[RMDB]
Description: This 177-nucleotide RNA was probed chemically with 2A3 and DMS. The 2A3 profile rests on 11,070 reads. The DMS profile rests on 3,401 reads. The reactions ran in a buffer of 150 mM KOAc, 10 mM MgCl2 and 150 mM bicine (pH 8.5), at 24 C. DMS adducts were read by reverse transcription with MarathonRT.
RNA sequence: GGGAACGACUCGAGUAGAGUCGAAAAUCUUCAUUUAGCAUGUUCGAUAACCUCUCCUCUUUUUUUCUCGGUCCUGAUCGUACUCAUCCGACUUGUAUGGGAGCGACAUUGAAGGUUCCGGAAAUCCCUUUCCUACACAGUUCGCUGUGUAGGAAAGAAAAGAAACAACAACAACAAC
Reactivity to 2A3 in 0.01 (KOAc 150mM, MgCl2 10mM, bicine 150mM(pH8.5), 24C), signal-to-noise 9, nucleotides 027 to 126: u030c010u140u060c030a080u110u110u130a060g070c080a050u080g050u060u080c050g040a060u040a140a100c010c010u010c010u030c020c020u040c050u050u060u010u020u020u050u010c090u050c100g030g010u030c000c010u060g030a150u010c020g020u060a090c020u010c020a040u000c030c050g130a210c200u130u210g030u080a040u050g010g020g020a110g020c020g020a030c040a100u040u140g060a080a030g020g000u150u040c010c000g010g010a020a030a050u020c010c000
Reactivity to DMS in 0.01 (KOAc 150mM, MgCl2 10mM, bicine 150mM(pH8.5), 24C), signal-to-noise 3, nucleotides 027 to 126: u050c010u000u050c050a050u010u010u020a180g010c120a080u020g010u000u000c040g040a150u020a080a090c050c020u010c070u000c020c020u000c010u000u000u000u000u000u000u010c010u000c000g020g030u010c040c060u000g020a150u000c030g000u000a130c010u000c010a090u010c030c030g000a130c180u000u060g020u010a040u000g010g030g010a300g050c040g000a020c070a110u030u030g000a080a030g000g000u030u010c020c010g020g040a010a030a070u030c140c050